[RMDB]
RNA sequence: GGGAACGACUCGAGUAGAGUCGAAAAGCUAUGAAGAUACGAUGACGAGAAUGACGGUUUUCUUCGAUUUGGGUACCAAAGUUCUUUUGGUAUUUGAUGAGAAGCGACCUCAACGUGAUUCUAAAUGAGUACAAGUCCUUUUCGAAGGACUUGUACUAAAAGAAACAACAACAACAAC
Reactivity to 2A3 in 0.01 (KOAc 150mM, MgCl2 10mM, bicine 150mM(pH8.5), 24C), signal-to-noise 8, nucleotides 027 to 126: g060c050u090a070u240g100a070a060g030a070u080a070c060g040a060u120g100a020c040g020a020g070a230a110u090g010a030c130g010g000u010u020u100u050c000u000u000c000g020a030u000u000u020g020g010g000u000a000c000c000a010a010a010g120u250u240c060u070u070u010u000g000g000u000a000u000u000u010g010a020u000g000a000g010a010a000g000c010g020a010c000c000u020c000a040a050c040g030u050g040a060u020u010c010u060a060a080a070u230g070
Reactivity to DMS in 0.01 (KOAc 150mM, MgCl2 10mM, bicine 150mM(pH8.5), 24C), signal-to-noise 6, nucleotides 027 to 126: g010c070u020a060u000g000a110a060g000a070u000a070c110g010a050u020g010a080c090g010a080g000a090a060u020g020a030c230g010g010u000u000u020u010c000u000u000c010g000a240u000u000u000g010g000g000u000a000c000c000a010a000a020g010u040u040c110u030u000u000u000g010g000u000a000u000u000u020g020a000u010g000a300g000a000a000g010c300g000a010c000c020u000c020a070a070c040g020u010g000a050u010u000c050u010a030a080a090u020g010
The record gives the reactivity of an RNA of 177 nucleotides to 2A3 and DMS.
The RNA was probed in 150 mM KOAc, 10 mM MgCl2 and 150 mM bicine (pH 8.5) at 24 C.